RNA sequence: GGGAACGACUCGAGUAGAGUCGAAAAGAUAUGGACAUUGGCAGCUUUUGACGCGAGUAAAUCGGAAACGAUUUACAUCGCGAUAAGCUGCCCAAUGUCCUAAGUCAAACCGGCCUUCGGGCCGGAACUACACAUUUGGGUUCGCCCAAAUGUGUAGAAAAGAAACAACAACAACAAC
Reactivity to DMS in 0.01 (KOAc 150mM, MgCl2 10mM, bicine 150mM(pH8.5), 24C), signal-to-noise 3, nucleotides 027 to 126: g010a010u000a300u000g010g000a000c000a000u010u000g010g000c000a010g000c000u000u000u010u000g030a260c050g000c010g020a020g010u000a000a000a000u000c000g000g000a140a070a260c020g020a000u000u000u000a000c000a090u000c000g020c000g020a040u010a020a000g010c000u000g000c190c010c030a000a010u000g000u000c000c010u000a000a070g000u000c020a120a180a190c000c000g000g000c000c000u000u010c180g050g020g040c000c000g000g000a010a110
Reactivity to 2A3 in 0.01 (KOAc 150mM, MgCl2 10mM, bicine 150mM(pH8.5), 24C), signal-to-noise 2, nucleotides 027 to 126: g030a000u040a060u160g010g000a010c020a000u010u000g000g000c010a010g020c020u130u110u200u290g270a150c050g000c010g020a000g010u020a020a010a000u000c030g020g040a100a030a030c010g020a010u010u000u010a010c000a180u000c010g010c030g000a000u000a010a000g000c000u000g000c000c000c000a000a000u000g000u000c000c000u000a040a000g010u000c010a010a050a120c010c000g030g000c000c020u140u150c270g080g000g000c020c010g020g000a010a000
Structure probing data (DMS and 2A3) for a 177-nucleotide construct.